[RMDB]
RNA sequence: GGGAACGACUCGAGUAGAGUCGAAAAAAGAGAAGAAGGCGAUCCAAGACCAGAUCGACCAGAUCCAAGCACAGAAGGAUCAGAUCGCGCUGGAGAAGGACAAGCUCAAGCUGCAGCAGCAGCAGACCGGGCAGAUGGGCGAGCAGAAGACGCUAGCGAUAAAUUACGGGUUCGCCCGUAAUUUAUCAAAAGAAACAACAACAACAAC
Reactivity to 2A3 in 0.01 (KOAc 150mM, MgCl2 10mM, bicine 150mM(pH8.5), 24C), signal-to-noise 3, nucleotides 027 to 156: a000a000g070a000g000a070a000g020a020a020g030g040c050g020a040u030c030c030a070a000g070a080c000c000a010g010a070u040c010g030a040c010c040a010g000a000u000c000c000a060a040g170c050a140c070a230g210a170a060g080g000a010u010c010a000g020a040u000c000g000c000g000c050u020g020g030a050g050a120a080g020g010a020c020a070a040g000c030u020c050a060a050g000c000u020g000c000a140g000c020a020g000c010a000g000c020a000g100a010c030c080g010g010g030c030a030g040a120u070g000g040g000c000g000a010g000c020a010g020a080a010g070a040c080g000c110u070a030g040c040
Reactivity to DMS in 0.01 (KOAc 150mM, MgCl2 10mM, bicine 150mM(pH8.5), 24C), signal-to-noise 2, nucleotides 027 to 156: a060a100g040a130g000a100a030g000a060a050g020g030c030g060a080u010c040c040a030a180g020a150c010c050a090g000a070u000c000g020a040c000c020a140g000a050u000c000c010a030a180g010c120a220c190a170g000a170a170g000g000a020u020c010a120g000a030u000c010g000c230g000c010u000g000g020a070g000a120a300g020g000a050c070a040a120g010c050u010c020a030a140g020c000u020g000c010a210g010c150a150g030c010a060g010c010a050g000a040c090c030g020g010g020c040a110g000a070u010g010g020g030c050g000a060g010c030a040g000a060a110g000a040c090g020c020u000a070g040c240